[RMDB]
RNA sequence: GGGAACGACUCGAGUAGAGUCGAAAAGGCUCGUGGAGGCUCUAGGUGCGCAUACCGCGGGGCUACUGAGGCGGUGGUUGCACGUCGACGACAAGCUCCUCGACUGGCUCCUAUCCACCAUAGGCGACCAUCUAUGUAUCUUCGGAUACAUAGAUGGAAAAGAAACAACAACAACAAC
Reactivity to 2A3 in 0.01 (KOAc 150mM, MgCl2 10mM, bicine 150mM(pH8.5), 24C), signal-to-noise 7, nucleotides 027 to 126: g090g000c020u030c090g020u020g000g020a030g010g020c000u000c010u020a020g000g020u020g010c240g000c070a020u050a150c060c020g000c030g010g000g000g000c010u050a040c040u070g040a040g030g000c040g050g060u080g050g160u200u230g060c090a030c080g020u000c010g020a110c020g020a030c060a090a020g000c010u000c000c000u000c010g010a030c080u020g020g000c000u020c000c010u080a150u300c010c010a010c000c010a020u040a030g020g010c010g010a030
Reactivity to DMS in 0.01 (KOAc 150mM, MgCl2 10mM, bicine 150mM(pH8.5), 24C), signal-to-noise 8, nucleotides 027 to 126: g010g020c010u010c070g050u000g000g010a060g010g010c010u000c010u000a040g000g010u000g000c040g010c040a060u000a090c120c010g010c160g020g000g000g000c030u000a070c070u000g010a300g000g010c010g010g020u000g010g010u010u000g010c050a080c030g010u000c010g000a300c180g000a090c160a090a060g010c030u000c000c010u000c010g010a090c180u000g010g000c010u000c010c000u000a020u010c010c010a070c020c010a040u000a060g000g000c040g000a230